[RMDB]
RNA sequence: GGGAACGACUCGAGUAGAGUCGAAAAGCCACAUGUCGAGCUGCAGCGUCGGAACCAUCGUCGGGGAUGCCACGGCGAGGUGCCAUCACAACACCCGUGCGGUGAAGCAUCCCACUCGCACCGCCCACUAUAGCAGUCCUUUCGAGGACUGCUAUAGAAAAGAAACAACAACAACAAC
Reactivity to 2A3 in 0.01 (KOAc 150mM, MgCl2 10mM, bicine 150mM(pH8.5), 24C), signal-to-noise 8, nucleotides 027 to 126: g050c030c010a080c040a080u160g040u120c050g040a010g000c020u030g010c080a050g010c010g070u070c030g050g020a050a030c030c010a090u060c030g080u020c040g040g000g000g010a030u040g020c010c010a040c010g030g000c020g030a140g000g010u010g010c030c010a170u200c060a030c060a120a050c000a030c010c030c020g090u300g300c040g090g000u050g080a090a000g000c000a010u000c000c000c000a020c010u020c010g000c010a030c010c010g010c010c010c000a040
Reactivity to DMS in 0.01 (KOAc 150mM, MgCl2 10mM, bicine 150mM(pH8.5), 24C), signal-to-noise 3, nucleotides 027 to 126: g000c040c010a080c140a060u040g010u000c050g020a180g020c050u000g010c090a060g000c060g010u000c010g020g020a160a050c090c040a060u000c060g010u000c060g010g010g020g020a050u000g020c010c010a050c000g010g020c010g010a070g010g010u000g000c020c000a130u020c200a090c200a070a300c070a030c030c000c000g020u010g030c020g040g000u000g000a090a060g060c000a040u000c010c000c010a160c030u010c040g050c030a020c040c040g000c020c040c050a170